Structure probing data (2A3) for a 177-nucleotide construct.
The data come from the RNA Mapping Database (RMDB), library OK1LIB.

[RMDB]
RNA sequence: GGGAACGACUCGAGUAGAGUCGAAAACGAUCGUUGCUGAGCCGGAAGUCGGUCAGAUCUACGAAGGCACUGUUGUCAAGACCGCCGACUUCGGCGCUUUCGUCAACUUCUUCGGCGCCCGCGACGGAGGCCAUGAUCGCUUCGGCGAUCAUGGCCUAAAAGAAACAACAACAACAAC
Reactivity to 2A3 in 0.01 (KOAc 150mM, MgCl2 10mM, bicine 150mM(pH8.5), 24C), signal-to-noise 1, nucleotides 027 to 126: c030g020a090u300c000g000u010u040g010c020u060g040a020g000c000c020g090g110a070a040g010u110c140g050g020u130c080a080g000a040u080c050u020a000c010g070a100a080g010g000c050a000c100u090g070u160u000g040u030c000a000a060g020a070c010c010g010c000c090g000a090c000u010u010c000g000g000c000g050c000u030u030u040c070g060u040c000a050a050c000u000u020c000u020u000c000g010g000c070g020c030c030c000g010c010g000a050c020g060g000
Conditions: 150 mM KOAc, 10 mM MgCl2 and 150 mM bicine (pH 8.5), 24 C.